[RMDB]
RNA sequence: GGGAACGACUCGAGUAGAGUCGAAAAGAUAUGGAGAUAUGGCGAGCGUCUCGGAAACGAGAACGCGAUGAGCCAUCCCCCAUCUCCUAAGUCAAAACAAGGCCCUGCGUUCGCGCAGGGCCUUGAACCUACGGUUUUAGUUCGCUAAAACCGUAGGAAAAGAAACAACAACAACAAC
Reactivity to DMS in 0.01 (KOAc 150mM, MgCl2 10mM, bicine 150mM(pH8.5), 24C), signal-to-noise 1, nucleotides 027 to 126: g030a070u010a300u020g010g000a090g030a110u000a030u000g000g040c020g000a210g030c010g010u000c000u000c000g000g000a040a050a250c030g000a010g020a100a030c020g030c000g000a050u050g060a300g000c010c000a030u000c050c000c000c020c050a100u000c010u000c000c000u030a040a120g000u020c120a070a110a060a180c010a000a030g020g000c000c020c000u040g030c030g000u000u000c230g010c000g070c030a010g000g060g010c000c010u000u000g010a030a070